[RMDB]
RNA sequence: GGGAACGACUCGAGUAGAGUCGAAAAUACUGCUCUUGCACUCCCCCGCAGUGGACUAUCGAGCACAUUUCUACAUUGAACAAUACUCCUCACUUUUGGACACUCUGAUGGAGAAGGGGGUCCCUGGGCCUUAGAAUGUUUUCGAACAUUCUAAGGCAAAAGAAACAACAACAACAAC
Reactivity to DMS in 0.01 (KOAc 150mM, MgCl2 10mM, bicine 150mM(pH8.5), 24C), signal-to-noise 4, nucleotides 027 to 126: u010a100c100u000g000c020u000c050u010u010g020c070a150c070u010c020c030c000c040c060g020c090a060g020u000g000g010a060c070u000a090u000c100g010a060g020c050a070c120a070u000u000u000c020u000a070c100a100u010u020g010a080a060c100a060a080u010a120c090u000c020c020u000c120a110c080u000u010u000u000g000g000a080c110a060c110u010c040u010g010a080u020g010g010a080g020a080a100g010g000g000g020g000u000c000c000c030u000g010g030
Reactivity to 2A3 in 0.01 (KOAc 150mM, MgCl2 10mM, bicine 150mM(pH8.5), 24C), signal-to-noise 2, nucleotides 027 to 126: u080a030c040u000g010c000u030c030u070u220g050c060a040c060u020c000c020c030c020c010g000c010a010g010u050g020g010a000c010u010a040u190c070g010a010g040c040a010c020a060u070u040u050c020u060a060c020a170u090u140g030a040a020c030a070a060u060a120c040u030c020c000u080c040a100c070u150u100u060u090g060g010a020c030a020c100u040c020u030g060a080u120g040g040a070g000a040a020g010g010g000g030g000u000c000c000c010u040g010g130
Structure probing data (DMS and 2A3) for a 177-nucleotide construct. For 2A3, 1,805 sequencing reads were counted. Reactivities are given for positions 27 through 126. 2A3 adducts were read by reverse transcription with SuperScript II with manganese. The DMS profile rests on 3,061 reads. The RNA was probed in 150 mM KOAc, 10 mM MgCl2 and 150 mM bicine (pH 8.5) at 24 C.